[RMDB]
RNA sequence: GGGAACGACUCGAGUAGAGUCGAAAAAUCCUGCCCUUCGGGGCAGGAUGCAGCUUCGCUCUUGAGAGCGGGACUUAAGAGGAAUCCCAACGCGCAGAAGCACUAUUUCUCAGUUCGCUGAGAAAAAGUGCACUCUUGGAUUCGUCCAAGAGUGCACAAAAGAAACAACAACAACAAC
Reactivity to 2A3 in 0.01 (KOAc 150mM, MgCl2 10mM, bicine 150mM(pH8.5), 24C), signal-to-noise 2, nucleotides 027 to 126: a000u020c010c000u010g020c000c010c000u010u090c300g060g010g010g010c000a000g000g020a000u000g000c020a000g000c000u000u040c010g000c000u020c010u110u190g070a100g020a030g130c000g000g040g030a130c000u010u070a020a010g010a000g070g060a060a080u030c030c000c020a030a050c140g100c020g000c060a030g010a080a010g030c010a020c060u100a170u050u050u000c000u000c000a030g020u040u070c170g030c090u010g000a000g000a000a000a000a010a010
Reactivity to DMS in 0.01 (KOAc 150mM, MgCl2 10mM, bicine 150mM(pH8.5), 24C), signal-to-noise 2, nucleotides 027 to 126: a020u000c010c000u000g010c000c010c010u000u000c130g040g000g000g010c000a020g030g000a000u000g000c120a080g010c020u000u000c010g020c000u020c010u000u000g010a060g000a140g030c050g010g000g010a130c020u000u000a040a070g000a040g030g010a130a140u020c000c000c010a090a100c170g000c100g000c080a070g000a060a070g010c010a060c140u020a160u000u010u000c000u000c000a000g000u000u010c250g010c010u000g000a000g000a010a010a060a100a090